[RMDB]
An RNA of 177 nucleotides, treated with 2A3 and DMS and read out base by base.
Values are in units of 0.01, from 0 to 300, in steps of 10.
RNA sequence: GGGAACGACUCGAGUAGAGUCGAAAACUGGAAAGGCCACUGUUUAGUCUAGCUCUAAAAUCAUGCAUGUUUUGGAACUUAGGAGCACAGGAUGAAACCCCAAUAAAGUGCAUGCUUCCUCUAAAAGCAAUACGCAACAAUUCGUUGUUGCGUAUUGAAAAGAAACAACAACAACAAC
Reactivity to 2A3 in 0.01 (KOAc 150mM, MgCl2 10mM, bicine 150mM(pH8.5), 24C), signal-to-noise 6, nucleotides 027 to 126: c020u050g060g050a130a010a040g080g000c030c020a030c090u050g060u080u100u090a040g010u000c040u030a010g010c020u000c000u050a060a060a030a080u100c040a030u070g040c020a020u070g100u060u140u050u060g070g010a040a030c010u080u040a130g000g040a020g030c030a020c020a050g010g010a000u020g030a080a040a040c010c020c000c010a010a010u130a100a120a010g040u030g030c000a010u010g000c010u070u030c020c020u050c030u090a100a100a030a000g030
Reactivity to DMS in 0.01 (KOAc 150mM, MgCl2 10mM, bicine 150mM(pH8.5), 24C), signal-to-noise 8, nucleotides 027 to 126: c040u000g010g010a060a110a110g010g010c040c050a070c060u000g010u000u000u000a070g010u010c040u010a050g020c020u010c020u000a020a040a040a060u010c090a040u000g010c070a050u000g010u000u000u000u000g010g000a060a030c060u000u000a090g010g000a080g010c080a040c070a050g000g010a090u000g000a070a070a120c090c010c010c060a060a080u000a040a060a090g010u010g010c010a030u000g000c100u000u000c030c020u000c140u000a050a080a090a080g000
Source: RMDB library OK2TRN, as collected in RNAgym. DMS (dimethyl sulfate) methylates the pairing face of unpaired adenines and cytosines. 2A3 adducts were read by reverse transcription with SuperScript II with manganese. The RNA was probed in 150 mM KOAc, 10 mM MgCl2 and 150 mM bicine (pH 8.5) at 24 C. For DMS, 13,508 sequencing reads were counted.